[RMDB]
RNA sequence: GGGAACGACUCGAGUAGAGUCGAAAAGUACGACAACUUAUUACGCAUCCUCGUACGAUCGAUGCUAAGAUUAGUGGCGAAAGCCACAAGCACGGGCAUUCAUAAGUCAGAUCCGAGAGGAUUUGACGUCCUAGCCUGUGCAAGACUAGGUCAGACAAUCCCAUACUAAUUUCGAUUAGUAUGGGAUAAAAGAAACAACAACAACAAC
Reactivity to DMS in 0.01 (KOAc 150mM, MgCl2 10mM, bicine 150mM(pH8.5), 24C), signal-to-noise 5, nucleotides 027 to 156: g010u000a050c030g030a090c060a100a060c070u000u000a120u010u000a150c170g000c070a080u000c060c050u000c030g010u000a080c070g010a180u010c040g020a070u000g000c020u000a060a090g010a170u000u010a140g040u000g010g010c010g030a140a110a270g020c000c000a010c010a040a090g000c030a020c020g040g020g020c020a180u000u000c040a100u000a080a180g000u000c000a010g000a010u000c000c010g030a300g000a300g020g010a020u000u000u000g010a010c000g000u000c060c060u000a110g020c000c000u000g020u000g010c040a020a030g010a100c050u010a060g010g000u000c020a220g010a100c070a110
Reactivity to 2A3 in 0.01 (KOAc 150mM, MgCl2 10mM, bicine 150mM(pH8.5), 24C), signal-to-noise 8, nucleotides 027 to 156: g060u050a030c040g040a020c060a080a040c090u170u140a110u170u130a140c120g010c030a030u030c010c030u050c050g090u160a080c090g020a050u080c030g010a010u040g000c020u050a050a030g040a140u100u200a030g000u000g000g000c010g030a070a010a000g000c010c000a000c000a010a010g000c000a000c000g000g000g000c020a030u070u090c040a040u220a200a030g000u000c000a000g000a000u000c000c000g020a020g000a020g060g000a000u010u000u000g000a000c000g050u060c010c030u030a030g000c000c000u000g000u000g000c000a010a000g000a010c060u070a030g060g030u030c030a010g020a070c030a030

About this RNA: The record gives the reactivity of an RNA of 207 nucleotides to DMS and 2A3. For DMS, 13,950 sequencing reads were counted. Values cover nucleotides 27 to 156. Source: RMDB library OK3TST, as collected in RNAgym. DMS adducts were read by reverse transcription with MarathonRT.